Chemical mapping of a 177-nucleotide RNA with DMS and 2A3. 2A3 adducts were read by reverse transcription with SuperScript II with manganese. The RNA was probed in 150 mM KOAc, 10 mM MgCl2 and 150 mM bicine (pH 8.5) at 24 C.
[RMDB]
RNA sequence: GGGAACGACUCGAGUAGAGUCGAAAAAAGAUCGUGCUUCCGUGUAAUCUGCUGCGUCUCAUUUGGAAUGCUCAGAAAAUAUUCAAAGUUGAUCUGCGCAACGCGGUGAAUCUCUCGCCGUUGCACGAGCAAUUAGCUUCUUCGGAAGCUAAUUGCUAAAAGAAACAACAACAACAAC
Reactivity to DMS in 0.01 (KOAc 150mM, MgCl2 10mM, bicine 150mM(pH8.5), 24C), signal-to-noise 2, nucleotides 027 to 126: a090a030g030a070u000c030g000u010g000c010u000u010c060c040g040u000g050u010a070a140u000c030u000g000c060u000g060c010g040u010c050u010c090a170u000u000u000g000g000a070a080u000g030c040u000c010a050g050a040a100a080a080u000a070u000u000c230a090a080a090g000u000u000g000a050u000c010u000g020c150g030c010a020a090c060g000c010g000g000u000g000a040a070u000c150u000c090u000c030g000c030c060g030u000u000g020c060a030c110g000
Reactivity to 2A3 in 0.01 (KOAc 150mM, MgCl2 10mM, bicine 150mM(pH8.5), 24C), signal-to-noise 1, nucleotides 027 to 126: a000a020g090a070u060c030g030u030g000c010u020u000c030c060g000u010g030u020a080a090u000c030u080g030c030u030g030c040g050u000c040u010c080a220u090u070u200g120g050a090a080u040g010c000u010c040a000g060a060a040a010a020u100a090u020u150c040a070a020a000g030u060u040g040a030u060c030u060g020c030g000c030a000a030c000g000c030g020g000u140g050a110a190u050c030u020c000u020c020g010c000c000g010u000u000g030c000a050c010g000